[RMDB]
RNA sequence: GGGAACGACUCGAGUAGAGUCGAAAACAGGCGCCAUAUCAUCCCGCCCAGUACCAACAGUUGCAGCAACAGACGGCUGCCUAUCAUCUGCUGCAGCAGCAGGUGAAUGCUGGCGGCGGAGCAACGGUCCCUCCAGUACGUUCGCGUACUGGAGGGAAAAAGAAACAACAACAACAAC
Reactivity to DMS in 0.01 (KOAc 150mM, MgCl2 10mM, bicine 150mM(pH8.5), 24C), signal-to-noise 1, nucleotides 027 to 126: c060a080g000g020c070g030c010c030a000u010a040u010c020a090u000c030c000c010g010c050c010c030a060g010u000a160c070c090a120a140c100a090g010u000u000g030c010a050g000c100a150a010c120a100g020a120c130g000g030c000u000g020c000c070u000a060u000c010a020u000c000u000g020c010u000g010c230a200g010c040a020g010c000a050g010g000u000g000a010a070u020g020c150u000g000g000c020g020g000c040g000g020a050g020c030a030a020c050g000g000

An RNA of 177 nucleotides, treated with DMS and read out base by base.
The data come from the RNA Mapping Database (RMDB), library OK2TST.
The reactions ran in a buffer of 150 mM KOAc, 10 mM MgCl2 and 150 mM bicine (pH 8.5), at 24 C.
For DMS, 919 sequencing reads were counted.